[RMDB]
RNA sequence: GGGAACGACUCGAGUAGAGUCGAAAAGUCGGACUUGCCCCCACGGCCCUGGGUUCGGGCUAUGGCCUGGCCGAAGCGACCGUCGCCGUGUCGAUGUCAGCGCCCAACACGGGAUUCCGCACCGAAACACACACUUUAGGUUCGCCUAAAGUGUGUGAAAAGAAACAACAACAACAAC
Reactivity to DMS in 0.01 (KOAc 150mM, MgCl2 10mM, bicine 150mM(pH8.5), 24C), signal-to-noise 3, nucleotides 027 to 126: g000u010c040g000g000a130c070u010u020g010c050c010c020c020c030a140c060g010g000c240c010c050u000g000g010g000u010u020c070g030g000g030c030u010a090u010g030g010c040c070u000g000g030c000c020g020a050a100g010c000g010a090c070c070g000u030c060g000c020c020g000u030g020u020c040g000a090u010g010u000c020a070g000c070g020c000c040c020a040a050c050a070c030g000g000g010a140u010u010c010c050g020c050a060c050c020g000a070a150a180
Reactivity to 2A3 in 0.01 (KOAc 150mM, MgCl2 10mM, bicine 150mM(pH8.5), 24C), signal-to-noise 7, nucleotides 027 to 126: g050u020c010g010g030a090c040u080u160g040c010c000c000c010c010a040c040g030g000c010c010c020u070g080g000g000u090u180c100g020g020g010c020u040a100u100g060g000c000c020u020g030g000c000c020g050a090a010g020c030g030a070c080c050g100u130c030g000c040c010g080u100g020u080c010g060a030u070g050u040c010a010g010c010g010c040c010c000a030a020c040a020c020g070g000g010a030u170u020c010c010g020c030a050c020c010g070a050a150a000